[RMDB]
RNA sequence: GGGAACGACUCGAGUAGAGUCGAAAAACGGUCGUACGCGACCGAGGCGCGGCUAGGUCGACGGACCGAACAAUGGCAUCCCGCAUUCUGCCAUCCGCCGCGCAGCUUCGUCUCAAACGGUGCGGAAAAAAGUAGGACACCUUCGGGUGUCCUACAACGAGGACUAAAUGUUCGCAUUUAGUCCUCGAAAAGAAACAACAACAACAAC
Reactivity to DMS in 0.01 (KOAc 150mM, MgCl2 10mM, bicine 150mM(pH8.5), 24C), signal-to-noise 1, nucleotides 027 to 156: a080c000g050g000u000c010g000u000a100c100g020c000g000a040c010c010g010a030g010g000c030g070c030g020g000c040u000a040g000g020u020c000g010a160c290g000g040a030c000c040g040a240a070c300a130a000u000g000g000c000a050u000c090c040c060g000c080a130u000u000c080u000g030c030c000a050u000c040c060g000c000c000g010c010g040c020a000g030c060u010u000c040g010u000c000u000c050a100a130a060c080g010g010u000g030c000g000g060a000a170a070a050a110a130g000u000a000g000g000a010c000a010c010c010u000u000c300g020g060g040u000g020u000c000c000u010a000c000a020a090
Reactivity to 2A3 in 0.01 (KOAc 150mM, MgCl2 10mM, bicine 150mM(pH8.5), 24C), signal-to-noise 3, nucleotides 027 to 156: a000c010g000g000u000c000g030u050a040c210g010c020g100a000c000c000g000a060g000g000c000g000c000g000g010c010u010a010g000g000u000c010g110a200c270g140g020a000c000c000g000a000a000c020a010a010u010g000g000c000a020u080c000c050c010g000c000a020u300u100c020u050g000c000c000a000u020c010c030g000c000c000g000c010g010c000a000g000c010u090u100c060g070u000c010u010c050a120a110a040c050g000g000u010g000c000g000g000a030a050a020a000a010a040g000u000a000g000g000a000c000a000c010c010u040u110c250g060g000g000u000g000u000c000c000u000a000c000a000a000